Conditions: 150 mM KOAc, 10 mM MgCl2 and 150 mM bicine (pH 8.5), 24 C. An RNA of 177 nucleotides, treated with DMS and 2A3 and read out base by base. 2A3 adducts were read by reverse transcription with SuperScript II with manganese. For 2A3, 1,245 sequencing reads were counted. As a SHAPE reagent, 2A3 marks flexible, mostly unpaired nucleotides at the ribose 2'-OH.
RNA sequence: GGGAACGACUCGAGUAGAGUCGAAAAUCUUGCAUGGCCGACCGAGCUCUGGGAUUAUUUCGUGGAGCAGAAUCCCGGUCUGGCUAUGAACGCCAUCCAGACCAUCGGCAAGCGCCUGGAAGAGGCAGGUACCCUUUUAGUUCGCUAAAAGGGUACCAAAAGAAACAACAACAACAAC
Reactivity to DMS in 0.01 (KOAc 150mM, MgCl2 10mM, bicine 150mM(pH8.5), 24C), signal-to-noise 2, nucleotides 027 to 126: u000c020u010u000g000c000a020u000g020g010c010c010g000a030c030c010g000a090g010c030u010c060u030g000g000g040a010u000u000a140u010u000u000c020g000u000g000g010a020g020c030a160g000a100a160u020c210c140c020g010g000u010c010u000g070g000c040u000a020u000g010a070a070c090g000c040c020a100u000c010c030a040g000a030c000c040a100u020c150g010g010c170a080a100g000c140g010c010c010u000g010g010a060a070g000a160g010g040c030a030
Reactivity to 2A3 in 0.01 (KOAc 150mM, MgCl2 10mM, bicine 150mM(pH8.5), 24C), signal-to-noise 1, nucleotides 027 to 126: u010c000u000u150g060c020a000u060g000g020c010c000g000a000c000c020g030a040g000c000u000c000u040g110g030g000a040u060u090a220u130u300u080c290g150u230g010g010a020g000c020a010g170a090a100u100c000c030c020g010g010u000c040u090g010g000c020u020a000u010g010a000a080c040g000c010c000a020u000c000c010a010g050a060c000c010a040u100c070g080g020c050a070a130g080c090g000c090c000u000g030g000a040a010g050a130g050g010c010a010